[RMDB]
RNA sequence: GGGAACGACUCGAGUAGAGUCGAAAACUAGCGGGCACAGCCAGUAGCCCCGCCGCACGGCGUCCCUGGUGUGGUGUGUGAUGAAGGCACAGAGUAGGGAUCCCAGCAUUAGGCUGGUCCGGAAAUACUCAGUAUUAGCAUUCGUGCUAAUACUGAGAAAAGAAACAACAACAACAAC
Reactivity to DMS in 0.01 (KOAc 150mM, MgCl2 10mM, bicine 150mM(pH8.5), 24C), signal-to-noise 4, nucleotides 027 to 126: c030u010a080g000c030g010g000g030c040a040c060a070g000c040c040a160g020u010a120g000c030c030c000c030g010c040c020g000c060a070c080g020g000c080g010u010c020c020c010u020g000g030u010g010u020g000g010u010g000u010g020u030g000a120u040g010a100a100g010g000c070a050c080a070g010a060g010u010a060g010g000g010a080u010c120c000c000a120g000c030a100u020u020a100g010g030c010u000g000g000u000c040c020g000g000a090a100a100u030a100
Reactivity to 2A3 in 0.01 (KOAc 150mM, MgCl2 10mM, bicine 150mM(pH8.5), 24C), signal-to-noise 8, nucleotides 027 to 126: c050u050a030g100c030g020g010g000c030a050c020a200g020c020c010a070g040u060a030g030c010c010c000c000g010c000c010g040c010a020c040g050g020c040g060u060c000c010c010u050g040g040u070g020u030g030g090u010g010u010g040u030g050a200u090g060a090a080g090g000c030a020c020a030g100a030g080u150a050g060g010g010a060u080c020c010c010a020g000c030a080u140u250a110g020g010c000u000g000g000u010c000c000g010g020a060a080a020u180a050
The data come from the RNA Mapping Database (RMDB), library OK1LIB. Chemical mapping of a 177-nucleotide RNA with DMS and 2A3. For 2A3, 9,679 sequencing reads were counted. Values cover nucleotides 27 to 126. 2A3 adducts were read by reverse transcription with SuperScript II with manganese. Conditions: 150 mM KOAc, 10 mM MgCl2 and 150 mM bicine (pH 8.5), 24 C.